Structure probing data (2A3 and DMS) for a 177-nucleotide construct. Source: RMDB library M2PK50, as collected in RNAgym. For 2A3 the reverse transcriptase was SuperScript II with manganese. For 2A3, 2,198 sequencing reads were counted.
RNA sequence: GGGAACGACUCGAGUAGAGUCGAAAAGAAUUCUUGUUCGCAAGAAUUCAAAUAAGAAAGCUGACCAGCUAUGAGGUCAUACAUCGUCAUAGCUCAAAAUAAAAAGCUUUGUCUUCGGACAAAGCAACUCUCUUAGACAGUUCGCUGUCUAAGAGAGAAAAGAAACAACAACAACAAC
Reactivity to 2A3 in 0.01 (KOAc 150mM, MgCl2 10mM, bicine 150mM(pH8.5), 24C), signal-to-noise 2, nucleotides 027 to 126: g000a000a010u010u010c000u010u000g020u060u070c120g020c080a020a010g030a010a000u000u020c000a000a080a000u140a020a060g190a150a090a000g040c070u030g000a000c000c010a000g000c010u010a000u000g000a020g020g010u010c040a010u160a160c070a160u140c130g030u000c010a000u010a010g010c020u010c080a160a150a010a010u230a060a100a030a040a030g000c000u000u000u000g000u000c000u010u070c270g070g000a000c000a000a000a000g000c000a000a000
Reactivity to DMS in 0.01 (KOAc 150mM, MgCl2 10mM, bicine 150mM(pH8.5), 24C), signal-to-noise 1, nucleotides 027 to 126: g010a000a000u000u000c000u000u000g000u000u010c110g060c010a000a000g000a020a000u000u000c000a050a090a090u020a070a130g000a070a160a150g000c200u020g000a040c040c040a190g040c000u000a020u000g000a030g030g000u000c050a110u000a060c120a040u000c140g000u000c020a000u020a000g030c020u060c170a050a040a030a090u040a070a170a120a120a130g000c000u000u000u000g020u010c000u020u030c150g000g000a020c000a000a010a020g000c000a010a010